RNA sequence: GGGAACGACUCGAGUAGAGUCGAAAAGAUAUGGACUGGCAAGACAUGAAACGGGGUGGAUGAAAUUCGUGUCGGAAACGACACGAUUUCAUCCACCCCGUUUCAACAGCUUGACCAGUCCUAAGUCCAUCACAUCUAUGUUCGCAUAGAUGUGAUGAAAAGAAACAACAACAACAAC
Reactivity to DMS in 0.01 (KOAc 150mM, MgCl2 10mM, bicine 150mM(pH8.5), 24C), signal-to-noise 1, nucleotides 027 to 126: g010a110u000a300u000g000g010a010c010u000g010g000c000a020a000g020a060c100a270u000g000a000a010a010c010g010g000g030g120u000g000g050a030u020g030a020a010a030u000u010c000g020u000g000u000c000g040g000a080a070a260c020g030a020c000a000c030g020a050u000u000u020c000a010u000c000c000a000c000c020c000c000g000u000u000u000c020a010a040c240a130g010c000u000u000g000a150c000c000a000g010u010c000c000u000a000a070g010u010c070
This 177-nucleotide RNA was probed chemically with DMS. For DMS, 2,252 sequencing reads were counted. Values cover nucleotides 27 to 126.